[RMDB]
About this RNA: This 207-nucleotide RNA was probed chemically with 2A3. Values cover nucleotides 27 to 156.
RNA sequence: GGGAACGACUCGAGUAGAGUCGAAAACAGGAAACUGGUUAAUCGUUUUCCUUGGUAGUAUAGCGGAAACCAUAAAUAAGAAGAACUCUAAGUGCUUGAGUAGAGUUAAAAUAAUUAGACAGCCAAUUAAGGUACUCCACGUUCGCGUGGAGUACAACACCGUCUGUAACUUCGGUUACAGACGGUGAAAAGAAACAACAACAACAAC
Reactivity to 2A3 in 0.01 (KOAc 150mM, MgCl2 10mM, bicine 150mM(pH8.5), 24C), signal-to-noise 2, nucleotides 027 to 156: c030a000g060g010a010a010a040c060u130g080g000u090u190a130a110u110c040g000u010u010u080u070c000c040u000u050g070g000u010a020g010u030a080u030a110g050c030g030g040a010a060a030c010c000a000u100a080a120a030u130a050a040g050a020a010g020a050a000c000u020c000u000a000a110g070u080g260c030u100u090g010a020g010u010a000g000a010g020u060u100a050a020a000a020u090a010a010u050u000a000g010a010c000a000g040c050c010a010a030u170u100a180a000g070g000u010a000c000u010c000c020a000c020g080u070u020c140g000c020g090u000g000g000a000g000u000a000c000a000a000